[RMDB]
RNA sequence: GGGAACGACUCGAGUAGAGUCGAAAAGAUGAUUAGUUCGCUAAUCAUCAAAGAACGCUGCAACGCGCAGAGAGGGCGCGAGAGCGAGAAUGCGCGAAGAAAAAAGUUACGGGUUCGCCCGUAACAAUCCACAUAUCUACUUCGGUAGAUAUGUGGAAAAAGAAACAACAACAACAAC
Reactivity to DMS in 0.01 (KOAc 150mM, MgCl2 10mM, bicine 150mM(pH8.5), 24C), signal-to-noise 3, nucleotides 027 to 126: g000a000u000g010a010u000u000a010g000u000u010c230g020c010u010a010a000u000c000a010u000c000a070a110a070g010a140a120c090g010c090u000g020c070a160a170c010g000c020g010c010a040g000a130g020a170g010g000g010c000g000c020g000a080g000a170g010c010g020a080g000a140a120u010g000c010g020c020g010a090a150g020a010a070a100a070a120a130g000u000u000a000c000g000g000g000u000u010c260g010c010c000c000g010u000a000a000c000a060a050
Reactivity to 2A3 in 0.01 (KOAc 150mM, MgCl2 10mM, bicine 150mM(pH8.5), 24C), signal-to-noise 2, nucleotides 027 to 126: g010a000u010g010a000u010u010a000g010u020u030c130g000c150u010a010a000u000c000a010u030c010a010a010a000g050a090a010c050g040c110u180g030c070a130a080c020g010c000g000c040a000g080a020g030a050g050g200g030c030g000c000g040a060g020a010g020c020g000a040g040a060a080u060g020c060g030c040g060a130a170g120a060a160a010a030a000a030g000u010u000a000c000g000g000g040u020u040c240g020c010c000c000g000u000a020a000c000a010a020
Background:
Chemical mapping of a 177-nucleotide RNA with DMS and 2A3. 2A3 adducts were read by reverse transcription with SuperScript II with manganese. For DMS, 2,957 sequencing reads were counted. For 2A3, 2,857 sequencing reads were counted. Conditions: 150 mM KOAc, 10 mM MgCl2 and 150 mM bicine (pH 8.5), 24 C. Source: RMDB library M2PK50, as collected in RNAgym. Values cover nucleotides 27 to 126.